Source: RMDB library OK3TST, as collected in RNAgym. An RNA of 207 nucleotides, treated with 2A3 and DMS and read out base by base. The DMS profile rests on 29,839 reads. Reactivities are given for positions 27 through 156. The 2A3 profile rests on 17,655 reads. 2A3 is a SHAPE reagent: it acylates the 2'-hydroxyl of flexible nucleotides of all four kinds.
[RMDB]
RNA sequence: GGGAACGACUCGAGUAGAGUCGAAAAGAUGUCAAUAGGUAAGGCUAUAUCUGUUGGCACUACAGGCACUAUGUCGCAUCAUGGUCCCUGUGAACUCGAAGCUUGAUGCGACAAGUUUUGAGUGAUCUAAGACACUAUAGCCUUAGUUUUUUAGAGACGAGUCCUCAAUGUUCGCAUUGAGGAUUCGAAAAGAAACAACAACAACAAC
Reactivity to 2A3 in 0.01 (KOAc 150mM, MgCl2 10mM, bicine 150mM(pH8.5), 24C), signal-to-noise 7, nucleotides 027 to 156: g080a060u030g010u030c010a010a020u010a040g030g000u010a020a010g010g000c000u010a000u000a010u010c020u010g010u010u010g010g000c010a000c010u080a050c020a040g050g030c050a010c070u090a070u130g010u010c020g000c040a020u010c000a000u050g040g010u040c010c000c020u040g030u020g090a070a030c010u020c050g020a020a010g020c010u000u010g000a000u030g020c010g040a010c000a000a000g000u000u000u030u050g040a030g010u030g040a050u020c020u050a050a010g020a010c010a000c030u010a000u000a020g000c000c000u000u000a010g000u000u000u000u010u010u060a040g000a000g010a020
Reactivity to DMS in 0.01 (KOAc 150mM, MgCl2 10mM, bicine 150mM(pH8.5), 24C), signal-to-noise 6, nucleotides 027 to 156: g000a080u000g020u000c010a020a050u000a020g030g000u000a030a080g020g010c070u000a110u000a010u000c010u000g040u000u000g010g010c020a040c040u000a090c040a060g000g040c110a060c050u000a060u000g020u000c100g040c100a080u010c010a040u000g020g010u000c050c000c010u000g010u010g010a080a100c060u000c030g020a040a060g010c050u000u010g000a080u000g010c140g020a110c010a030a040g010u000u000u000u000g010a110g020u000g000a130u000c020u000a040a070g020a030c020a050c050u000a130u000a130g010c000c010u000u000a030g010u000u000u000u000u000u000a090g000a150g010a200